[RMDB]
RNA sequence: GGGAACGACUCGAGUAGAGUCGAAAAGAUAUGGAAACUUGGCCAUGAACUACUAACUGGGUCGGAAACGACCCAGACUUAGCAUGGCUUGAAGUUUCCUAAGUCAAAAGCACUCUUCGGAGUGCAACAGUGUUAUUAGGUUCGCCUAAUAACACUGAAAAGAAACAACAACAACAAC
Reactivity to 2A3 in 0.01 (KOAc 150mM, MgCl2 10mM, bicine 150mM(pH8.5), 24C), signal-to-noise 6, nucleotides 027 to 126: g010a020u090a020u120g000g000a000a000a000c020u040u090g010g000c000c010a020u020g020a110a110c080u180a030c020u020a300a040c010u010g000g010g010u010c010g020g050a130a100a050c010g000a010c030c000c000a000g000a000c000u000u000a000g010c000a010u010g000g000c000u010u060g020a000a000g000u000u000u000c000c000u000a120a010g060u010c040a010a020a080a140g000c000a000c010u000c000u060u180c300g190g000a010g000u000g020c000a000a010
Reactivity to DMS in 0.01 (KOAc 150mM, MgCl2 10mM, bicine 150mM(pH8.5), 24C), signal-to-noise 8, nucleotides 027 to 126: g010a050u010a300u010g000g010a010a010a020c000u000u000g010g000c000c000a010u000g000a090a060c080u010a300c060u010a040a050c010u000g000g000g010u000c000g010g010a090a120a230c010g020a020c000c000c000a000g000a030c240u000u000a000g010c020a000u000g000g000c000u010u010g010a010a020g030u000u000u000c000c000u000a020a090g010u010c030a090a090a160a190g010c000a000c000u000c000u000u010c220g020g000a020g020u000g000c000a040a060